[RMDB]
RNA sequence: GGGAACGACUCGAGUAGAGUCGAAAAAGCCGUGAUAAGCUUCUGGUAGCCGUUGCCGAAGCAUUACAGCAAUCAACAGGCACCAUACUGAAACGUGCGGACGGCGAUUAUUCGCCCGAUACAGCGACGAGUAGUACGUGUUCGCACGUACUACUCGAAAAGAAACAACAACAACAAC
Reactivity to 2A3 in 0.01 (KOAc 150mM, MgCl2 10mM, bicine 150mM(pH8.5), 24C), signal-to-noise 2, nucleotides 027 to 126: a010g000c000c000g030u020g040a070u060a130a060g020c010u060u020c070u120g000g000u000a030g000c090c040g050u050u040g020c020c010g030a040a000g000c010a010u040u160a060c050a090g060c020a010a140u130c030a020a110c000a070g000g000c000a020c000c000a030u080a090c060u130g080a190a050a000c010g010u080g030c060g030g000a000c010g010g030c010g000a020u110u100a110u210u050c040g000c000c030c010g030a050u120a100c080a040g070c040g110a070
Reactivity to DMS in 0.01 (KOAc 150mM, MgCl2 10mM, bicine 150mM(pH8.5), 24C), signal-to-noise 2, nucleotides 027 to 126: a120g030c000c000g040u010g010a080u010a150a130g000c000u010u000c030u020g040g080u010a060g020c100c080g000u010u000g030c020c010g000a050a030g010c020a020u010u020a080c150a160g040c070a100a080u000c060a070a080c110a160g010g000c080a130c060c080a090u000a080c070u010g000a090a070a090c040g000u000g000c000g000g010a100c170g010g000c000g020a080u000u000a030u000u000c000g000c000c010c010g020a130u010a080c160a150g000c090g000a110
This 177-nucleotide RNA was probed chemically with 2A3 and DMS. For DMS the reverse transcriptase was MarathonRT. The data come from the RNA Mapping Database (RMDB), library OK2TST. The reactions ran in a buffer of 150 mM KOAc, 10 mM MgCl2 and 150 mM bicine (pH 8.5), at 24 C.